Overview
Chemical mapping of a 207-nucleotide RNA with 2A3. It was measured as part of the RMDB library ARCHII. High 2A3 reactivity points to a flexible backbone, as in loops and unpaired stretches. For 2A3, 1,372 sequencing reads were counted. The RNA was probed in 150 mM KOAc, 10 mM MgCl2 and 150 mM bicine (pH 8.5) at 24 C.
[RMDB]
RNA sequence: GGGAACGACUCGAGUAGAGUCGAAAAGGCACCAGCUGUUUAAGGGUGAAAAGAGUGGUGCUGGGCAGUGCGGUUGGGCUUCCUGGGCUGCACUGUCGAGACUUCACAGGAGGGCUAAGCCUGUAGACGCGAAAGGUGGCGGCUCGUCGGACGCGGGGAAGACAUUGUUCUUCGGAACAAUGUCUUCAAAAGAAACAACAACAACAAC
Reactivity to 2A3 in 0.01 (KOAc 150mM, MgCl2 10mM, bicine 150mM(pH8.5), 24C), signal-to-noise 2, nucleotides 027 to 156: g040g000c000a000c010c010a060g180c020u060g080u170u030u160a110a110g090g080g020u120g130a070a050a000a030g050a020g010u050g030g000u000g000c000u020g000g000g000c000a010g000u000g000c020g000g010u010u000g020g010g010c000u000u080c000c010u000g010g000g010c000u000g070c030a010c000u000g000u030c000g000a000g010a030c110u110u110c150a020c000a000g030g000a010g000g000g020c020u050a000a070g000c000c020u030g090u100a020g020a100c010g040c020g030a100a100a060g010g030u020g030g010c010g010g000c020u000c040g110u040c030g010g070a060c070g000c000g040g000g030